[RMDB]
RNA sequence: GGGAACGACUCGAGUAGAGUCGAAAACAGUUUUAGGGCUCAGGUGAACUGAAAGCUGUGAAAAGAUAAGUCAACGUUGGGCAUUUUUAUCACUAUAUUCACAUAGAUGACUUGGUGGCACGUGGCCUGAGCCUGAGCCCCACCUGGGACCAGGCUGAUGAAGGCCGUAAUUCGUUACGGCCUUCAUAAAAGAAACAACAACAACAAC
Reactivity to 2A3 in 0.01 (KOAc 150mM, MgCl2 10mM, bicine 150mM(pH8.5), 24C), signal-to-noise 1, nucleotides 027 to 156: c010a030g040u030u050u150u160a050g010g000g010c000u000c030a000g000g000u060g010a080a080c000u020g040a070a100a020g070c070u050g000u020g020a050a140a000a000g090a020u110a120a040g010u000c050a040a040c100g080u050u020g060g010g000c130a090u050u090u000u060u060a200u110c010a010c000u030a030u030a030u270u070c020a020c040a130u180a070g140a300u100g000a050c050u000u050g000g040u040g000g050c040a030c130g050u110g060g000c010c000u010g010a000g000c020c000u010g000a000g000c000c000c000c020a040c000c020u050g000g020g010a020c060c030a000g000g000c000u000g000
Reactivity to DMS in 0.01 (KOAc 150mM, MgCl2 10mM, bicine 150mM(pH8.5), 24C), signal-to-noise 1, nucleotides 027 to 156: c010a050g050u000u000u010u000a090g020g060g060c040u010c020a090g030g020u000g040a140a260c070u050g000a090a040a150g030c040u000g000u020g000a070a080a120a150g000a130u010a040a060g020u000c030a050a070c070g050u000u000g000g010g000c070a120u000u000u000u000u060a100u030c030a070c110u000a040u020a100u000u000c130a030c090a090u000a090g030a080u000g010a040c010u000u000g020g020u010g040g030c050a020c090g010u020g010g010c000c030u000g020a210g010c000c000u000g010a070g020c000c010c000c000a110c120c050u010g020g010g010a050c000c020a050g000g020c020u020g030